Source: RMDB libraries RFM100 and RFMREP, as collected in RNAgym. An RNA of 177 nucleotides, treated with DMS and 2A3 and read out base by base.

[RMDB]
RNA sequence: GGGAACGACUCGAGUAGAGUCGAAAAGGCGGGAUGAAGGGGCUGAGUGGGCGCAUGCCCUCAAUGAAGCCACUUGCGAACUUGGGGCGACAGGCGGUGUCGAGACGUCCCCUUCGGAGAGAGUAUAAAGGGUAGCAAAAUUCGUUUUGCUACCCUUAAAAGAAACAACAACAACAAC
Reactivity to DMS in 0.01 (KOAc 150mM, MgCl2 10mM, bicine 150mM(pH8.5), 24C), signal-to-noise 5, nucleotides 027 to 126: g020g010c060g010g010g000a120u020g000a060a050g010g000g010g030c030u000g000a090g010u010g030g000g020c020g020c200a060u040g020c010c020c020u000c050a150a070u040g000a180a110g000c000c050a070c020u010u050g000c100g000a040a090c090u010u000g010g010g010g010c020g020a090c080a060g000g020c050g000g010u010g000u000c030g020a070g010a120c050g000u010c010c000c010c030u000u020c020g020g000a120g000a060g000a100g010u030a050u020a080
Reactivity to 2A3 in 0.01 (KOAc 150mM, MgCl2 10mM, bicine 150mM(pH8.5), 24C), signal-to-noise 2, nucleotides 027 to 126: g050g030c000g000g000g030a020u060g020a030a020g030g010g010g000c010u020g010a000g060u050g020g030g000c020g020c040a040u210g010c000c030c020u030c010a030a090u150g030a030a010g000c000c020a110c000u080u140g060c100g010a060a010c000u030u050g000g060g000g000c040g030a010c020a020g010g090c020g000g060u070g040u070c020g020a030g010a040c050g070u090c010c000c000c010u040u000c030g020g000a020g000a000g000a000g040u070a100u110a160
Conditions: 150 mM KOAc, 10 mM MgCl2 and 150 mM bicine (pH 8.5), 24 C. The 2A3 profile rests on 1,498 reads.